[RMDB]
RNA sequence: GGGAACGACUCGAGUAGAGUCGAAAAUCCACUGAGUGUAGUAAUCUCGCAAAGGAUCAUUGACAUCAAUGUCGUGGAAUUCACUACGCAUCAUCGGAGUUAAAAUGAUGUUCAUCGCUUCCACUUAGCAUUACUCCACUUUCGAGUGGAGUAAUGCAAAAGAAACAACAACAACAAC
Reactivity to DMS in 0.01 (KOAc 150mM, MgCl2 10mM, bicine 150mM(pH8.5), 24C), signal-to-noise 3, nucleotides 027 to 126: u010c000c010a170c190u010g010a060g010u000g010u000a040g020u010a090a050u000c050u000c030g000c140a080a140a170g020g000a050u010c040a050u000u010g000a120c200a110u010c040a050a060u010g020u010c060g050u020g000g010a050a080u010u000c140a030c010u000a060c080g010c040a040u000c010a030u000c100g000g020a100g010u010u000a030a080a120a070u000g000a090u010g000u000u010c080a100u000c070g020c140u000u000c010c010a060c080u000u000a140
Reactivity to 2A3 in 0.01 (KOAc 150mM, MgCl2 10mM, bicine 150mM(pH8.5), 24C), signal-to-noise 3, nucleotides 027 to 126: u000c010c000a010c060u090g030a040g050u030g000u010a040g030u020a030a070u030c030u030c060g000c040a140a110a040g130g020a050u110c040a070u020u210g030a100c020a090u160c010a060a090u080g020u090c050g010u030g050g040a040a020u070u050c040a030c010u020a010c070g000c000a120u010c010a010u040c060g100g030a090g040u130u140a100a050a040a050u080g010a030u070g060u100u080c050a040u030c070g010c040u020u010c020c010a050c040u020u060a010